[RMDB]
Record summary: Conditions: 150 mM KOAc, 10 mM MgCl2 and 150 mM bicine (pH 8.5), 24 C. An RNA of 177 nucleotides, treated with DMS and 2A3 and read out base by base. 2A3 adducts were read by reverse transcription with SuperScript II with manganese. Source: RMDB libraries RFM100 and RFMREP, as collected in RNAgym.
RNA sequence: GGGAACGACUCGAGUAGAGUCGAAAAGGCUGUCAUUUAUGAAACUGAGCCCAGAUCCAGCCAAUCGUUCACCUCCUCAUAACAAGUCUAACUGGCUCGGGGAAGCUGAAAGGGCUGCACUAAAAUAAUUCUAGAUCAUGUUCGCAUGAUCUAGAAUAAAAGAAACAACAACAACAAC
Reactivity to DMS in 0.01 (KOAc 150mM, MgCl2 10mM, bicine 150mM(pH8.5), 24C), signal-to-noise 6, nucleotides 027 to 126: g000g010c020u000g000u010c030a070u020u020u030a060u040g010a090a110a070c080u000g010a100g010c010c010c030a090g000a100u010c130c000a040g010c030c040a090a140u010c070g010u000u010c020a040c040c020u000c010c000u010c020a100u030a120a110c270a110a050g000u000c020u010a090a110c180u030g000g000c020u010c090g000g010g000g000a060a060g010c100u000g010a030a080a090g010g000g010c010u000g020c120a070c120u010a050a070a070a090u030a080
Reactivity to 2A3 in 0.01 (KOAc 150mM, MgCl2 10mM, bicine 150mM(pH8.5), 24C), signal-to-noise 9, nucleotides 027 to 126: g030g010c030u030g030u100c050a130u020u110u250a200u170g100a110a050a060c060u040g020a030g020c010c020c000a030g010a090u040c010c020a010g000c000c010a020a100u090c030g060u030u020c010a090c030c010u030c000c010u010c010a030u070a200a050c050a100a010g020u000c020u070a050a070c050u140g010g020c000u010c040g010g000g000g010a040a010g010c080u050g040a060a040a060g020g020g010c000u030g020c050a070c070u140a020a040a040a100u180a040